[RMDB]
RNA sequence: GGGAACGACUCGAGUAGAGUCGAAAAAGCGAUGAUACGUCAUCGCAACGAUUGCCUGAUCGUAAAACAUGAGACGGCCGUGGCCGCGACCACGUAAAAAAGCGUAACGUGGUCUACGGACCACGAAAAAAGCGCGGAACGUUCGCGUUCCGCGCAACGAGGAGAGAUAGUUCGCUAUCUCUCCUCGAAAAGAAACAACAACAACAAC
Reactivity to 2A3 in 0.01 (KOAc 150mM, MgCl2 10mM, bicine 150mM(pH8.5), 24C), signal-to-noise 1, nucleotides 027 to 156: a010g000c020g000a000u010g000a000u030a080c290g060u020c010a000u010c000g000c000a010a020c050g050a050u020u110g000c000c010u050g040a050u030c030g060u160a000a110a040a130c080a150u200g030a000g030a090c080g000g000c000c000g000u000g000g000c010c000g010c020g030a000c000c000a000c010g010u080a050a020a000a000a020a000g060c020g000u000a010a010c010g000u000g000g010u000c030u020a080c190g020g010a030c000c030a000c000g000a000a000a000a000a000a010g000c000g000c010g000g000a000a000c000g030u080u100c200g000c000g080u000u000c000c010g000c000g000c000a000a000
This 207-nucleotide RNA was probed chemically with 2A3. For 2A3 the reverse transcriptase was SuperScript II with manganese. It was measured as part of the RMDB library M2RFPK.